[RMDB]
RNA sequence: GGGAACGACUCGAGUAGAGUCGAAAAUAACCAUGUGCAGGAUGUUGGUUUAAGCCUCUCCCAAUUUUCUAGUAACCUCACUGGGCUAGACGGGGCUCAAUAUACCUCUUCACCAAUGGCAUGGCUUCUAUGGAGACGGGUUCGCCCGUCUCCAUAGAAAAGAAACAACAACAACAAC
Reactivity to 2A3 in 0.01 (KOAc 150mM, MgCl2 10mM, bicine 150mM(pH8.5), 24C), signal-to-noise 2, nucleotides 027 to 126: u210a010a010c000c000a000u040g070u040g150c040a010g000g030a110u040g010u230u050g010g140u010u000u030a050a000g020c030c000u030c000u010c020c100c010a070a140u060u060u060u040c030u000a040g010u050a100a100c010c010u050c020a060c190u130g000g010g000c000u000a040g080a070c050g000g000g010g010c000u000c010a160a000u020a060u060a140c000c070u090c000u040u070c000a250c140c090a040a180u120g010g020c010a050u040g000g000c040u010u000
Source: RMDB library RFM100, as collected in RNAgym. The record gives the reactivity of an RNA of 177 nucleotides to 2A3. For 2A3, 522 sequencing reads were counted. Reactivities are given for positions 27 through 126.